[RMDB]
RNA sequence: GGGAACGACUCGAGUAGAGUCGAAAAGUGAAGAAGAGAUCUGGAUUAAGCAAGUUGUCAGUAGUGAUCCGUGAUAACUUCUGCAGAGGUGGCUAUGUGAAGGGGAUAGAGGACGUAAGCGGAGCUACUCAGCACCUAUGUUCGCAUAGGUGCUGAGAAAAGAAACAACAACAACAAC
Reactivity to DMS in 0.01 (KOAc 150mM, MgCl2 10mM, bicine 150mM(pH8.5), 24C), signal-to-noise 2, nucleotides 027 to 126: g000u010g010a130a060g010a040a040g010a040g020a030u000c020u000g000g000a070u000u000a150a160g010c080a070a090g000u010u010g020u000c090a110g000u000a070g020u010g000a020u000c040c070g010u000g010a030u000a050a040c020u000u000c030u000g000c080a070g010a090g000g000u010g010g000c070u000a050u010g010u010g000a120a090g000g000g000g000a100u000a070g010a070g000g010a010c110g020u000a060a080g000c090g000g000a090g000c050u000a110
Reactivity to 2A3 in 0.01 (KOAc 150mM, MgCl2 10mM, bicine 150mM(pH8.5), 24C), signal-to-noise 1, nucleotides 027 to 126: g040u060g070a060a030g030a020a010g050a030g000a030u010c000u040g040g010a000u090u040a080a070g080c050a030a200g100u070u060g130u220c060a060g020u080a020g040u110g050a070u000c010c000g080u050g020a000u020a050a020c000u040u040c030u090g010c050a020g020a000g100g040u090g040g000c020u050a070u080g070u020g080a110a000g000g010g000g030a010u030a070g130a040g000g000a000c040g050u000a050a020g020c040g000g020a020g020c010u000a020
Structure probing data (DMS and 2A3) for a 177-nucleotide construct. For DMS, 2,208 sequencing reads were counted. The data come from the RNA Mapping Database (RMDB), library OK2TRN. For 2A3, 1,487 sequencing reads were counted. High 2A3 reactivity points to a flexible backbone, as in loops and unpaired stretches. For DMS the reverse transcriptase was MarathonRT.